[RMDB]
RNA sequence: GGGAACGACUCGAGUAGAGUCGAAAAAGCACAAUGACUAAUCGCCAGUACCAUCAGAAAAUGCUUAAGUCCAUGGCUGCAACUCGUGGAGCGACUUGCGUCAUUGGUACUACAAAGUUCUACGGUGUCCCCAUGCGAUUCGUCGCAUGGAAAAGAAACAACAACAACAAC
Reactivity to 2A3 in 0.01 (KOAc 150mM, MgCl2 10mM, bicine 150mM(pH8.5), 24C), signal-to-noise 9, nucleotides 027 to 129: a000g120c070a060c040a060a090u110g020a030c030u050a080a060u090c050g020c030c010a000g010u010a040c010c020a030u090c030a020g140a070a110a020a030u180g020c030u100u090a070a010g010u000c010c000a020u020g040g000c100u160g010c070a010a010c020u010c020g030u120g180g130a140g110c020g030a020c010u010u020g000c000g020u010c000a030u050u180g030g000u070a010c000u010a020c070a020a100a020g030u070u030c020u050a040c050g020g010u020g050u050c000c000
Reactivity to DMS in 0.01 (KOAc 150mM, MgCl2 10mM, bicine 150mM(pH8.5), 24C), signal-to-noise 9, nucleotides 027 to 129: a060g050c080a070c090a080a070u040g000a020c000u000a050a050u020c100g040c010c060a050g010u010a060c070c020a080u030c130a050g000a050a060a040a060u060g040c070u040u040a030a020g000u010c030c020a040u020g020g000c050u090g050c030a050a040c070u000c030g040u050g030g050a170g030c060g030a020c060u030u020g020c090g030u000c020a000u020u040g000g000u040a030c010u020a030c140a050a040a040g020u010u010c050u050a040c140g030g000u040g000u020c010c050
Chemical mapping of a 170-nucleotide RNA with 2A3 and DMS. High DMS reactivity at an A or C suggests that its Watson-Crick edge is free. The RNA was probed in 150 mM KOAc, 10 mM MgCl2 and 150 mM bicine (pH 8.5) at 24 C. Values cover nucleotides 27 to 129. Reactivities are rounded to 0.1 and cut off at 0 and 3.